The data come from the RNA Mapping Database (RMDB), libraries RFM100 and RFMREP.
An RNA of 177 nucleotides, treated with DMS and 2A3 and read out base by base.
Values cover nucleotides 27 to 126.
RNA sequence: GGGAACGACUCGAGUAGAGUCGAAAAAGCAGAUACUAGGCUUAUUCGAUGGGUAAAAGGUCUCAAAUACUCAAAGCCCUAAUACACGUACGGAGUCGAAUAAGUAUAUCUGACAGGCAUAAGUGUGGAACUGUUUGAACUUCGGUUCAAACAGUUCAAAAGAAACAACAACAACAAC
Reactivity to DMS in 0.01 (KOAc 150mM, MgCl2 10mM, bicine 150mM(pH8.5), 24C), signal-to-noise 3, nucleotides 027 to 126: a150g020c000a010g000a000u020a020c300u100a080g020g000c000u000u000a020u020u000c000g000a000u000g000g000g020u010a020a090a300a030g030g000u000c040u000c290a030a100a140u000a060c210u020c120a090a100a110g000c070c000c000u020a040a220u000a030c040a080c090g050u030a100c250g030g000a080g010u010c000g010a010a000u000a030a020g010u010a080u000a000u000c000u050g000a060c120a150g000g000c130a020u010a030a140g000u000g010u000g000
Reactivity to 2A3 in 0.01 (KOAc 150mM, MgCl2 10mM, bicine 150mM(pH8.5), 24C), signal-to-noise 4, nucleotides 027 to 126: a000g040c000a000g000a020u040a040c080u160a100g130g120c000u030u000a000u000u000c000g000a020u090g050g000g120u050a030a060a020a060g000g050u000c000u010c110a120a210a050u250a130c080u080c080a110a080a000g000c000c000c000u030a100a070u060a030c120a000c090g050u300a030c150g060g040a010g010u000c000g000a000a000u000a000a000g010u020a010u010a010u040c000u010g100a100c000a050g030g100c040a000u160a160a080g040u080g050u140g150